An RNA of 177 nucleotides, treated with 2A3 and DMS and read out base by base.
It was measured as part of the RMDB library OK1LIB.
For 2A3, 561 sequencing reads were counted.
For DMS, 1,368 sequencing reads were counted.
[RMDB]
RNA sequence: GGGAACGACUCGAGUAGAGUCGAAAAGCAAAGGAGCAUGUUGACAUACUAAUCUAUGGAUAUCCACUACUAAAUGUGACAAGAAUAACAGACAUAAUGACAGUGAUUAGUGGAAUGCAAUUGCUGGAGAUAGUCUGUCCUUCGGGACAGACUAUCUAAAAGAAACAACAACAACAAC
Reactivity to 2A3 in 0.01 (KOAc 150mM, MgCl2 10mM, bicine 150mM(pH8.5), 24C), signal-to-noise 2, nucleotides 027 to 126: g210c130a070a010a000g240g000a090g000c000a010u030g050u050u090g040a020c000a010u000a000c000u100a050a020u060c030u050a040u140g090g000a030u070a050u030c050c070a100c090u200a070c070u200a120a210a040u240g040u090g000a050c160a150a080g140a120a100u170a300a000c000a070g100a000c010a140u300a200a160u180g060a060c000a000g000u050g040a000u000u140a000g000u020g050g080a080a000u000g000c000a000a050u020u020g030c000u000g000g000
Reactivity to DMS in 0.01 (KOAc 150mM, MgCl2 10mM, bicine 150mM(pH8.5), 24C), signal-to-noise 2, nucleotides 027 to 126: g010c060a040a140a120g000g010a110g040c010a050u000g000u010u000g010a220c040a190u010a000c060u030a020a020u070c300u000a000u030g000g000a090u000a100u000c020c010a080c030u030a020c200u000a000a130a020u030g000u010g020a170c200a110a100g010a110a010u090a030a090c140a090g000a010c100a070u000a070a090u040g000a090c070a000g010u000g000a010u030u010a040g000u030g000g000a000a070u030g030c000a050a070u050u000g000c000u010g000g000